[RMDB]
RNA sequence: GGGAACGACUCGAGUAGAGUCGAAAACAAUUUUUUAAACGAGUCCGGGGUUCUAUUGUAAAUGCCCGAAUAGAACCCUGUUCAAGUGGUUUGUCCACUGAUGUCGUCUUUAGGGCAUUUGACAUCUAGAUCCCUCCGUUCGCGGAGGGAAAAAGAAACAACAACAACAAC
Reactivity to 2A3 in 0.01 (KOAc 150mM, MgCl2 10mM, bicine 150mM(pH8.5), 24C), signal-to-noise 2, nucleotides 027 to 129: c020a000a000u050u000u050u060u070u300a060a100a050c020g000a010g040u090c120c030g030g000g010g010u010u010c000u030a000u000u080g080u070a000a000a090u030g000c000c000c000g020a000a000u010a000g000a080a020c000c030c010u000g060u000u000c060a030a060g000u000g010g070u080u190u300g050u060c000c000a000c000u000g010a000u060g020u030c030g000u000c090u000u180u200a070g000g000g000c000a000u000u000u050g000a000c020a090u000c090u000a000g010a040